RNA sequence: GGGAACGACUCGAGUAGAGUCGAAAAGCAGGCGUGCGUGCUGAUGGUGAACAUCAUGAUCGACAGCACGCUACAACCCACGCCCCAGUGCACCCGCGGCAACGACAACCUGCGGUCCAUGGGAAUCGGCAUGCAGGGCCUGCACACGGCCUGCCUGGAAUACUUUCCGAUUCGUCGGAAAGUAUUCAAAAGAAACAACAACAACAAC
Reactivity to DMS in 0.01 (KOAc 150mM, MgCl2 10mM, bicine 150mM(pH8.5), 24C), signal-to-noise 2, nucleotides 027 to 156: g010c030a060g050g020c020g020u010g020c000g040u000g030c000u000g010a080u000g010g020u000g000a100a150c140a170u000c110a080u010g010a060u000c000g020a130c010a040g010c010a030c000g030c010u000a000c050a060a120c000c010c020a110c050g030c050c010c010c020a170g000u000g050c030a110c090c010c000g010c030g020g000c050a050a080c060g020a180c020a090a130c030c010u000g020c020g030g010u000c060c040a140u000g000g010g000a170a070u010c050g000g010c030a070u000g000c040a140g010g020g000c030c000u000g000c010a110c030a100c100g000g010c050c010u010g000c000c050u050g040
Reactivity to 2A3 in 0.01 (KOAc 150mM, MgCl2 10mM, bicine 150mM(pH8.5), 24C), signal-to-noise 7, nucleotides 027 to 156: g030c020a010g010g000c020g030u030g000c010g030u020g000c010u020g020a170u110g050g080u110g090a150a080c060a170u200c060a110u240g080a090u100c050g110a030c020a010g000c000a000c000g000c000u010a000c010a030a060c000c010c020a010c040g040c010c010c000c010a030g030u020g040c050a030c020c010c030g000c050g050g000c050a150a080c150g100a040c050a060a070c030c010u070g010c050g040g010u030c050c040a100u120g020g010g000a020a100u120c060g020g000c060a020u050g020c040a070g030g030g010c000c030u030g020c010a020c000a010c030g040g000c000c010u020g000c000c010u020g060
An RNA of 207 nucleotides, treated with DMS and 2A3 and read out base by base. For DMS, 4,502 sequencing reads were counted. The RNA was probed in 150 mM KOAc, 10 mM MgCl2 and 150 mM bicine (pH 8.5) at 24 C. High 2A3 reactivity points to a flexible backbone, as in loops and unpaired stretches.